[RMDB]
RNA sequence: GGGAACGACUCGAGUAGAGUCGAAAAGUGAUGUACCAUAUCCGAACAUCGUAGCGGUUGAGGUUUAUGACAUGUCUCUCGAAGAUAUGGCCAGAUCUAUAUUGUCACAUAAAGCCAAGAGGUUUGAACUUCCUGAGGACUUCGGUCCUCAGGAAGUAAAAGAAACAACAACAACAAC
Reactivity to 2A3 in 0.01 (KOAc 150mM, MgCl2 10mM, bicine 150mM(pH8.5), 24C), signal-to-noise 2, nucleotides 027 to 126: g160u070g030a000u050g020u180a140c000c060a090u040a000u300c000c000g000a040a000c050a000u090c080g030u120a050g020c080g000g120u060u120g050a180g010g090u000u020u220a090u200g000a000c000a040u000g000u000c000u030c030u060c220g040a070a000g000a040u000a000u020g000g020c080c050a020g000a050u050c050u020a000u040a010u110u130g070u080c000a000c000a060u130a120a120a000g000c020c000a080a020g120a010g290g000u050u060u120g030a000
Reactivity to DMS in 0.01 (KOAc 150mM, MgCl2 10mM, bicine 150mM(pH8.5), 24C), signal-to-noise 1, nucleotides 027 to 126: g000u020g000a010u000g130u000a050c050c030a000u040a100u040c130c000g070a100a060c130a080u050c070g040u000a140g040c300g010g000u010u000g000a120g010g000u000u000u000a160u020g000a100c000a000u000g000u020c000u000c000u080c090g050a220a010g000a000u030a000u000g000g000c080c070a000g030a020u000c020u190a020u040a080u000u040g000u000c000a010c030a140u000a000a080a090g000c050c010a070a080g000a130g000g000u040u010u000g000a090
An RNA of 177 nucleotides, treated with 2A3 and DMS and read out base by base. The RNA was probed in 150 mM KOAc, 10 mM MgCl2 and 150 mM bicine (pH 8.5) at 24 C. For 2A3 the reverse transcriptase was SuperScript II with manganese. Source: RMDB library OK1LIB, as collected in RNAgym. As a SHAPE reagent, 2A3 marks flexible, mostly unpaired nucleotides at the ribose 2'-OH. For 2A3, 538 sequencing reads were counted. The DMS profile rests on 1,036 reads.